RNA sequence: GGGAACGACUCGAGUAGAGUCGAAAAGAACGAAACUUCGGUUUCGUUCAAAUAAUGCCUAGCUCGCGCUACGCAGGCAACGAGUAGGUCGUGCCACCUACAAAAGAUUUUAGUUCGCUAAAAUCAACACAUUGAUAGACUUCGGUCUAUCAAUGUGAAAAGAAACAACAACAACAAC
Reactivity to DMS in 0.01 (KOAc 150mM, MgCl2 10mM, bicine 150mM(pH8.5), 24C), signal-to-noise 3, nucleotides 027 to 126: g000a000a000c000g010a000a000a000c000u000u000c180g060g040u000u000u010c000g000u000u000c000a030a090a060u000a090a070u000g000c010c040u000a040g020c000u000c180g000c270g010c060u000a040c220g000c050a030g000g000c060a170a070c060g000a150g010u000a010g000g010u000c050g000u000g020c080c130a110c010c010u000a010c040a090a050a060a140g000a010u000u000u000u000a000g010u000u010c170g020c000u000a000a000a000a010u010c000a130a210
Reactivity to 2A3 in 0.01 (KOAc 150mM, MgCl2 10mM, bicine 150mM(pH8.5), 24C), signal-to-noise 3, nucleotides 027 to 126: g000a000a000c000g000a000a010a000c010u040u110c240g070g000u000u000u010c000g000u000u000c000a000a010a000u090a020a030u050g010c010c000u010a070g020c020u030c080g140c010g030c060u060a030c080g010c040a020g020g030c010a040a040c030g010a020g030u030a010g010g040u100c030g050u060g080c030c040a030c010c010u040a020c000a010a110a010a030g010a010u000u000u020u020a000g020u020u050c160g000c120u000a020a000a000a010u020c010a030a040
Structure probing data (DMS and 2A3) for a 177-nucleotide construct.
For 2A3, 5,866 sequencing reads were counted.
DMS adducts were read by reverse transcription with MarathonRT.
The reactions ran in a buffer of 150 mM KOAc, 10 mM MgCl2 and 150 mM bicine (pH 8.5), at 24 C.